[RMDB]
RNA sequence: GGGAACGACUCGAGUAGAGUCGAAAACUGUUCGCCCGCACUCGCGAGAACGACGACGAGCGCUUCGCCGACGUGCGCGAAGCGGUCGAACAGGUCGCCACCCAUGCGCACAACACGGGCCGCGAAGUCGCGACGCUGAGCUCGGCCGUGACGAGCGAGCCGUAACCUAUUUCGAUAGGUUACGGCUAAAAGAAACAACAACAACAAC
Reactivity to DMS in 0.01 (KOAc 150mM, MgCl2 10mM, bicine 150mM(pH8.5), 24C), signal-to-noise 2, nucleotides 027 to 156: c020u010g000u000u000c010g000c130c010c000g020c010a080c040u010c010g030c000g020a140g010a180a060c010g020a300c000g040a020c010g000a070g000c200g040c260u000u000c030g040c060c000g020a110c100g070u000g050c030g060c000g000a060a100g030c020g010g010u000c010g000a010a030c030a030g000g030u000c020g050c020c040a080c010c000c010a110u010g000c040g000c170a120c090a070a100c020a020c040g000g020g000c010c090g030c010g000a070a190g010u000c020g000c020g010a150c060g030c030u000g010a180g020c020u010c000g000g020c010c080g000u000g000a080c020g000a060g000c020g000
Reactivity to 2A3 in 0.01 (KOAc 150mM, MgCl2 10mM, bicine 150mM(pH8.5), 24C), signal-to-noise 5, nucleotides 027 to 156: c000u000g020u010u000c010g000c000c000c000g010c030a200c060u000c000g010c000g020a040g130a220a010c010g030a010c000g000a000c000g010a050g120c150g060c270u150u050c020g020c010c000g020a050c010g010u040g000c010g000c000g010a020a010g010c000g000g000u000c000g000a000a000c000a000g000g010u080c070g090c060c020a080c010c000c020a070u160g020c030g010c020a040c020a150a050c010a060c040g050g050g020c030c000g020c010g010a070a020g030u080c030g030c050g260a130c100g050c090u050g040a030g040c010u050c050g000g000c010c010g010u020g010a090c080g020a020g010c010g000